Structure probing data (2A3 and DMS) for a 177-nucleotide construct. The data come from the RNA Mapping Database (RMDB), library OK2TST. Conditions: 150 mM KOAc, 10 mM MgCl2 and 150 mM bicine (pH 8.5), 24 C.

RNA sequence: GGGAACGACUCGAGUAGAGUCGAAAAGACACUUCACCAUUACUCGUCCGGACGUGGAUUUGCACCGUCAACGCAGUGAGCAGUAUUACCGGGAAUAUAUCAGACAGCAGACCCGUUUAUCGGAGAGCCGUUACAAGAUAUUCGUAUCUUGUAACGGAAAAGAAACAACAACAACAAC
Reactivity to 2A3 in 0.01 (KOAc 150mM, MgCl2 10mM, bicine 150mM(pH8.5), 24C), signal-to-noise 8, nucleotides 027 to 126: g040a010c020a020c090u070u090c050a100c120c010a050u060u150a070c010u020c090g150u010c050c020g040g020a040c030g060u160g050g110a260u040u010u060g020c050a060c070c060g030u020c030a030a040c050g000c020a050g070u030g170a060g010c030a000g040u060a030u070u060a040c010c020g030g010g050a060a010u110a010u010a030u110c020a040g040a070c010a010g010c000a010g010a070c000c010c000g000u030u060u050a190u080c010g020g010a020g000a000g070
Reactivity to DMS in 0.01 (KOAc 150mM, MgCl2 10mM, bicine 150mM(pH8.5), 24C), signal-to-noise 8, nucleotides 027 to 126: g010a150c110a080c100u000u000c040a130c040c030a130u010u000a140c050u010c040g000u000c030c040g020g000a050c070g010u010g030g000a100u000u000u000g010c040a110c120c070g020u000c030a060a110c090g010c050a100g010u000g000a070g010c020a140g010u010a050u010u000a100c060c020g000g000g020a070a050u000a060u000a070u010c080a100g000a050c060a060g010c050a050g000a080c040c010c010g010u010u000u010a100u010c030g010g000a280g000a080g000
About this RNA: For DMS, 10,461 sequencing reads were counted.